[RMDB]
RNA sequence: GGGAACGACUCGAGUAGAGUCGAAAACCCAACGGAAUCGCCGUCCGUCUUCCCUGCCACUCGGGUAGCGUCCGGCUAAAUCAAUAGAGUGGAUACGCAUGUAGAACCGAUGGCAGAGGAUUUGCGGACGCGGGUUCAAUUCCCGCCGCCUCCACCACUAAUUAAGAUACUUCGGUAUCUUAAUUAGAAAAGAAACAACAACAACAAC
Reactivity to DMS in 0.01 (KOAc 150mM, MgCl2 10mM, bicine 150mM(pH8.5), 24C), signal-to-noise 1, nucleotides 027 to 156: c010c010c010a130a130c090g010g000a070a050u000c000g040c060c000g010u010c000c000g020u000c300u000u000c000c000c000u000g020c000c000a050c080u020c000g020g030g020u000a110g000c010g020u000c030c000g020g010c040u000a030a090a200u000c300a190a280u010a090g010a090g040u010g000g000a100u000a020c040g000c200a170u000g010u000a150g000a130a070c010c030g020a060u000g000g030c020a060g000a060g020g010a020u000u000u010g020c010g020g020a020c030g010c050g000g030g010u000u000c110a070a280u010u000c010c020c010g040c020c050g000c040c010u000c020c010a070c010c040a220
Reactivity to 2A3 in 0.01 (KOAc 150mM, MgCl2 10mM, bicine 150mM(pH8.5), 24C), signal-to-noise 4, nucleotides 027 to 156: c000c000c000a020a040c060g020g030a060a040u110c090g070c150c030g050u000c000c000g020u000c040u010u000c000c000c000u000g000c010c000a070c200u020c030g020g000g060u040a030g000c000g010u010c010c000g080g030c040u030a080a060a110u190c100a080a060u080a110g070a040g140u090g020g010a030u120a060c010g020c010a030u140g080u300a080g040a170a060c000c000g010a010u000g000g000c000a000g080a110g030g000a010u040u030u200g010c000g000g010a000c000g020c020g000g000g000u060u090c010a030a030u080u050c000c000c000g010c010c020g010c000c010u030c010c010a040c010c010a030